[RMDB]
RNA sequence: GGGAACGACUCGAGUAGAGUCGAAAAAGAUGGUUUGUUGCCAACCUCCUGUAUGAACUUGCAGGAUGUGAAGAGUACUUGCCUAGCUAUGUGCUUAAUUGCUGCCAUGACCUCGUGGCAACACAGGGAAUAGGACAUGUUUCGACAUGUCCUAUUCAAAAGAAACAACAACAACAAC
Reactivity to 2A3 in 0.01 (KOAc 150mM, MgCl2 10mM, bicine 150mM(pH8.5), 24C), signal-to-noise 9, nucleotides 027 to 126: a010g120a070u150g020g070u090u100u090g050u050u050g030c010c010a020a020c010c000u000c000c000u020g010u040a060u210g160a160a080c090u040u040g000c010a010g010g040a040u040g030u040g080a130a200g010a010g050u030a030c030u060u070g020c020c090u070a050g000c040u080a050u180g060u080g040c030u060u150a090a070u200u140g030c030u040g000c000c010a020u050g030a190c010c030u100c080g030u030g000g000c000a010a010c020a000c030a010g160g060
Reactivity to DMS in 0.01 (KOAc 150mM, MgCl2 10mM, bicine 150mM(pH8.5), 24C), signal-to-noise 5, nucleotides 027 to 126: a100g010a090u020g010g000u010u020u010g010u010u000g000c040c010a180a130c020c010u000c000c000u000g010u000a020u010g010a100a040c230u020u010g000c000a020g000g000a020u000g010u020g010a100a110g000a060g010u000a030c030u000u020g010c030c070u020a080g000c020u020a040u000g020u010g000c020u000u010a050a070u010u010g020c050u000g000c050c020a020u010g000a140c070c090u020c090g010u000g000g000c030a020a010c020a080c290a100g020g000

Chemical mapping of a 177-nucleotide RNA with 2A3 and DMS. The RNA was probed in 150 mM KOAc, 10 mM MgCl2 and 150 mM bicine (pH 8.5) at 24 C. 2A3 adducts were read by reverse transcription with SuperScript II with manganese. The data come from the RNA Mapping Database (RMDB), library OK1LIB.